[RMDB]
RNA sequence: GGGAACGACUCGAGUAGAGUCGAAAAAGCUAGUCCUGACUCUAGGAUCUCAGGACUAGAGCUCUAGGAAGAGUCGAAGAGAGUCUCGACUAGAGCUGAUCUCCUGAGACUUCUCUCCUCUUCUCUCUCUCGAGAGACUUCGAAGUCAGUCCUUCGAGCUAAAUCACAUGUUCGCAUGUGAUUUAGCAAAAGAAACAACAACAACAAC
Reactivity to 2A3 in 0.01 (KOAc 150mM, MgCl2 10mM, bicine 150mM(pH8.5), 24C), signal-to-noise 4, nucleotides 027 to 156: a000g050c010u000a010g020u010c010c010u000g020a050c030u040c080u200a150g070g090a230u080c020u010c020a000g000g000a000c000u000a000g000a030g000c000u010c010u030a020g030g050a080a030g010a030g030u100c150g190a300a010g020a010g000a000g050u030c010u010c000g100a110c080u100a050g000a000g010c050u020g040a070u050c030u000c000c050u060g010a030g010a020c050u290u010c000u070c000u020c000c000u000c000u040u020c010u010c000u000c000u000c000u040c050g090a060g000a010g030a040c040u140u040c070g020a080a020g030u060c040a030g060u070c020c010u040u090c070g030a020
Reactivity to DMS in 0.01 (KOAc 150mM, MgCl2 10mM, bicine 150mM(pH8.5), 24C), signal-to-noise 1, nucleotides 027 to 156: a170g010c020u010a010g000u000c000c020u000g010a050c080u000c090u020a180g000g010a040u000c030u010c020a050g010g000a070c030u010a010g000a060g000c000u000c010u000a040g000g040a120a150g010a050g050u000c070g040a130a070g010a080g000a120g020u000c010u000c010g020a220c100u000a120g010a070g020c060u020g000a050u000c030u000c010c040u000g010a080g030a060c040u000u010c020u000c020u000c000c010u000c030u000u000c020u010c020u000c000u020c060u000c030g020a050g000a100g020a040c060u020u000c040g020a140a300g000u000c010a110g010u010c080c070u000u020c030g020a300